[RMDB]
Chemical mapping of a 207-nucleotide RNA with 2A3. Values cover nucleotides 27 to 156.
RNA sequence: GGGAACGACUCGAGUAGAGUCGAAAACGCAUGCGAAAGCAUGCGGCUAUGCUAAUGCAUAGUGACCGCCUUUUGGCACACAUCGCGGGCUAUCGCCUUGUUAUUGGUGAUAGCGUUUCCUCAUAGACUUGUUAUUGUCUGUGCAGGUCGUGUGCAAGAGGGAGUCCCUAUUCGUAGGGACUCCCUCAAAAGAAACAACAACAACAAC
Reactivity to 2A3 in 0.01 (KOAc 150mM, MgCl2 10mM, bicine 150mM(pH8.5), 24C), signal-to-noise 1, nucleotides 027 to 156: c000g060c000a000u000g030c060g020a100a040a020g030c000a000u000g000c010g000g010c000u000a000u000g000c080u300a300a000u300g000c000a000u000a010g010u010g020a010c010c010g060c010c000u100u280u100u090g020g000c020a030c000a000c000a000u220c070g030c010g120g000g000c010u000a000u000c000g040c000c000u100u120g100u270u270a180u150u080g000g000u000g000a000u000a000g120c000g000u000u080u000c000c000u000c020a000u030a060g010a000c040u030u030g110u270u300a170u300u100g000u030c000u060g070u030g000c060a020g000g090u060c040g000u030g000u000g020c000a000a000